RNA sequence: GGGAACGACUCGAGUAGAGUCGAAAACAAAAACAUAGCUGGAUGUCAAAGCGAAGAAACGCUCCCAGACAACAGCAAGAAAUGCUCACAACCGCAAGUGAGCAAACAAUUGCGGUACAAAACAAAACGCAGUAGUAGACUUCGGUCUACUACUGCGAAAAGAAACAACAACAACAAC
Reactivity to 2A3 in 0.01 (KOAc 150mM, MgCl2 10mM, bicine 150mM(pH8.5), 24C), signal-to-noise 2, nucleotides 027 to 126: c010a020a060a060a000a030c140a080u270a060g030c030u050g130g060a300u020g030u060c000a050a120a000g020c000g020a090a000g210a150a270a020c000g000c000u010c000c000c000a000g060a000c000a000a000c000a000g090c000a030a010g050a000a000a120u300g010c000u000c000a000c000a050a000c030c000g000c000a020a030g000u080g000a000g020c060a020a040a000c030a020a280u000u000g000c000g000g000u050a020c150a010a000a130a000c050a030a020a040a000
Annotation:
Structure probing data (2A3) for a 177-nucleotide construct. For 2A3 the reverse transcriptase was SuperScript II with manganese. Reactivities are given for positions 27 through 126. The data come from the RNA Mapping Database (RMDB), library OK1LIB.